[RMDB]
RNA sequence: GGGAACGACUCGAGUAGAGUCGAAAAGGUGCAAUCUUCUUCAUCUGAUCGAAUGUCGGUACAGGAAAUUCAUACGUCACAAUUUCAAACUCAAAUUUGGUAUCGACGGGUAUCUGUGACACGAUGAUAAACUGACCCUUUGAGGGUGGUCCACUGACGUACCAGGGGUGUUCGCACCCCUGGUACGAAAAGAAACAACAACAACAAC
Reactivity to 2A3 in 0.01 (KOAc 150mM, MgCl2 10mM, bicine 150mM(pH8.5), 24C), signal-to-noise 2, nucleotides 027 to 156: g060g000u070g000c030a030a020u010c020u150u000c010u060u020c020a060u000c130u080g040a050u000c030g100a080a060u170g060u030c050g000g030u040a040c000a010g180g020a020a140a090u110u120c050a060u030a240c050g160u020c020a000c060a100a020u080u050u120c100a220a120a060c090u060c090a060a140a210u150u250u160g120g010u070a020u050c000g050a050c000g010g020g010u080a050u030c010u020g040u000g030a000c030a010c220g050a050u050g020a020u040a020a110a000c070u090g060a090c000c010c070u060u000u070g220a170g040g000g000u040g050g000u040c030c020a010c150u110g000a020
This 207-nucleotide RNA was probed chemically with 2A3. Reactivities are given for positions 27 through 156. The RNA was probed in 150 mM KOAc, 10 mM MgCl2 and 150 mM bicine (pH 8.5) at 24 C. It was measured as part of the RMDB library OK3TST. The 2A3 profile rests on 521 reads.